This 207-nucleotide RNA was probed chemically with DMS and 2A3. For 2A3, 700 sequencing reads were counted.

RNA sequence: GGGAACGACUCGAGUAGAGUCGAAAAUUGGGAGAUAGGACAUCAGGGGAGGAACUAGGUAAGAAAUGCCCUAAUUUCUGUCCACCUUCUGAUCUCCUAUCGGUGCCAUCAGCCAAGCCCAGCUCAAAGGUGGAAGCACGGGUGGGGAUGGUGGCUACUAGGGGAGUAUGUUCGCAUACUCCCCUAGAAAAGAAACAACAACAACAAC
Reactivity to DMS in 0.01 (KOAc 150mM, MgCl2 10mM, bicine 150mM(pH8.5), 24C), signal-to-noise 1, nucleotides 027 to 156: u000u000g000g000g040a180g000a050u000a050g010g010a010c060a040u000c020a050g050g000g020g020a220g020g020a030a050c030u020a050g020g020u030a100a120g010a090a040a090u000g000c210c030c070u000a020a040u000u000u000c020u000g000u000c030c110a070c030c000u000u000c000u000g000a050u000c070u010c000c010u000a010u000c000g030g050u000g000c000c000a040u000c000a020g000c040c000a090a270g000c000c000c040a170g000c030u000c050a040a140a120g000g000u000g030g010a100a050g040c000a070c030g030g040g040u000g030g000g060g020a100u010g030g010u020g000g010c010u000a030
Reactivity to 2A3 in 0.01 (KOAc 150mM, MgCl2 10mM, bicine 150mM(pH8.5), 24C), signal-to-noise 2, nucleotides 027 to 156: u160u030g050g020g000a090g000a000u000a000g000g030a000c010a010u000c000a000g000g050g000g000a040g020g010a010a010c030u020a050g110g060u080a110a040g050a090a110a010u120g080c090c000c000u050a080a100u000u070u090c050u040g100u050c040c040a080c000c000u220u300c030u060g000a000u000c000u000c030c000u000a010u000c000g000g000u000g000c000c000a000u000c010a000g000c000c000a050a020g000c010c000c040a000g000c000u010c030a090a190a050g190g060u180g070g080a140a000g000c020a010c200g010g020g020u100g020g130g000g000a000u000g000g000u000g000g030c000u020a060
Notes: Reactivities are given for positions 27 through 156.